Chemical mapping of a 207-nucleotide RNA with 2A3 and DMS. The DMS profile rests on 6,124 reads. Conditions: 150 mM KOAc, 10 mM MgCl2 and 150 mM bicine (pH 8.5), 24 C. The data come from the RNA Mapping Database (RMDB), library M2RFPK. The 2A3 profile rests on 6,012 reads. For DMS the reverse transcriptase was MarathonRT. For 2A3 the reverse transcriptase was SuperScript II with manganese.
RNA sequence: GGGAACGACUCGAGUAGAGUCGAAAAGGCUGCGUAUCUCUCUAGGGUACGUGAUAGUGCGAUAUAAGAAGCACUGGUACAUGCCGGCAGGGACAGUUAAGAGAUGGCCGCAGUCUCGUGUCCCUGCAAAAGGAGUUCUCGUUCGCGAGAACUCCAACGUCUUAUAGAAGUUCGCUUCUAUAAGACGAAAAGAAACAACAACAACAAC
Reactivity to 2A3 in 0.01 (KOAc 150mM, MgCl2 10mM, bicine 150mM(pH8.5), 24C), signal-to-noise 5, nucleotides 027 to 156: g020g000c010u020g000c030g010u000a020u000c070u000c020u020c120u270a110g040g000g000u010a000c010g010u010g040a040u110a040g000u010g000c030g020a020u030a020u080a300a100g130a080a020g000c010a000c000u010g020g030u130a090c060a050u160g010c010c000g020g000c010a010g010g010g010a010c000a050g000u140u160a160a030g030a000g000a020u040g070g080c120c050g080c100a020g020u000c000u000c000g030u030g000u000c000c000c010u000g000c000a000a000a000a010g010g000a000g000u000u000c000u000c000g040u060u050c230g000c000g080a000g000a000a000c000u000c000c000a000a000
Reactivity to DMS in 0.01 (KOAc 150mM, MgCl2 10mM, bicine 150mM(pH8.5), 24C), signal-to-noise 3, nucleotides 027 to 156: g030g010c030u010g030c010g000u000a090u010c000u010c090u000c120u020a180g010g040g010u000a000c020g040u000g010a120u000a030g020u010g000c010g040a150u010a180u000a130a210g020a230a290g020c000a010c010u000g010g030u010a050c090a150u010g020c030c010g000g010c010a020g010g010g010a030c010a060g030u000u000a100a160g020a050g000a040u000g010g060c070c150g010c080a200g010u000c000u000c020g010u000g030u000c000c020c000u000g000c020a020a030a080a120g000g000a030g010u000u010c000u010c010g030u000u010c300g000c000g000a020g000a020a010c000u000c010c000a010a030